[RMDB]
RNA sequence: GGGAACGACUCGAGUAGAGUCGAAAAGUGUAAAUAGAGGAGUCAGGGUUCGCACCCGCUCCGCGAACCUAGGGUAACACUGACUGUGGAGCGAAAGAGAUAGCGAGAGAGAACUCGCUAUCAGCAAAAUCAUAGCGGAUUUCGAUCCGCUAUGAUUAAAAGAAACAACAACAACAAC
Reactivity to DMS in 0.01 (KOAc 150mM, MgCl2 10mM, bicine 150mM(pH8.5), 24C), signal-to-noise 5, nucleotides 027 to 126: g020u000g000u000a050a100a110u020a100g020a160g010g000a050g010u000c030a170g000g000g010u010u000c030g020c030a090c050c070c010g000c000u000c000c020g000c010g000a030a010c020c020u000a110g010g010g030u020a090a060c050a060c030u010g000a090c100u000g020u030g020g000a060g000c010g000a140a100a130g010a130g000a010u000a000g010c000g000a010g000a150g010a270g000a080a110c000u000c000g000c000u010a000u000c000a110g010c210a060a060
Reactivity to 2A3 in 0.01 (KOAc 150mM, MgCl2 10mM, bicine 150mM(pH8.5), 24C), signal-to-noise 4, nucleotides 027 to 126: g050u040g040u090a080a140a150u230a080g110a090g180g030a040g060u060c040a050g020g050g000u010u010c010g000c020a070c030c080c000g000c000u000c010c000g000c000g000a020a020c000c010u050a050g110g020g070u080a080a010c010a010c050u040g070a020c050u140g050u190g130g010a010g030c040g060a060a070a010g140a000g000a000u010a000g000c010g000a000g000a000g000a000g030a100a070c000u000c000g020c000u000a000u000c010a000g000c010a030a150